[RMDB]
RNA sequence: GGGAACGACUCGAGUAGAGUCGAAAAGCUCCCACAGAGUGUAGUGGUCUCAAGUGAGGCUUAACGUAUGCGUGAACCAAAGAAGUUCUCCUUAGAGUGUGUGUUGUUUACCCAACACACUGUCCCUUGCUGUUUAUCUAUUCGUAGAUAAACAGCAAAAAGAAACAACAACAACAAC
Reactivity to DMS in 0.01 (KOAc 150mM, MgCl2 10mM, bicine 150mM(pH8.5), 24C), signal-to-noise 6, nucleotides 027 to 126: g000c140u000c010c000c000a130c130a140g010a070g010u000g010u010a070g030u020g010g010u000c010u000c040a210a130g010u000g020a050g010g000c020u000u010a060a070c070g020u010a050u000g000c070g020u010g010a070a080c090c070a050a120a070g020a090a100g000u000u010c010u000c010c040u010u010a080g000a080g010u010g000u000g010u000g000u000u000g010u010u010u050a130c240c210c010a020a010c010a020c000a010c010u000g000u010c010c010c020u000
Reactivity to 2A3 in 0.01 (KOAc 150mM, MgCl2 10mM, bicine 150mM(pH8.5), 24C), signal-to-noise 9, nucleotides 027 to 126: g030c020u030c010c080c000a010c020a020g190a030g040u100g020u130a060g040u050g050g020u020c020u010c040a150a160g080u150g190a010g020g000c000u040u060a050a010c040g070u080a060u140g050c050g030u070g040a020a030c050c010a170a060a050g070a060a020g040u070u070c020u030c010c010u070u100a050g010a050g090u080g000u000g010u000g010u020u010g020u020u140u120a070c020c020c000a000a010c000a000c000a010c000u000g030u010c010c000c000u010